[RMDB]
RNA sequence: GGGAACGACUCGAGUAGAGUCGAAAACACAUGCCAUCAUAUCGGUUAAGAACUCUUAACUCUGAUGGCUUUCGAGUUAUGUGGUGCAAUGAAGCUCUCCCUUCAAUUCAACGUACCGUUCCGUCAAGCCCAACAGAUACUUCGGUAUCUGUUGGGCAAAAGAAACAACAACAACAAC
Reactivity to DMS in 0.01 (KOAc 150mM, MgCl2 10mM, bicine 150mM(pH8.5), 24C), signal-to-noise 1, nucleotides 027 to 126: c160a130c260a040u000g000c000c000a010u000c000a130u000a150u000c290g000g000u010u000a030a040g000a260a300c300u000c000u000u000a000a010c000u000c080u000g000a020u000g000g040c000u000u000u010c010g000a060g000u000u010a040u010g040u000g020g000u000g000c020a030a120u010g010a020a060g020c040u040c030u040c010c010c010u000u000c080a060a090u000u000c030a070a060c060g030u000a080c050c030g020u000u000c010c010g000u000c020a060a050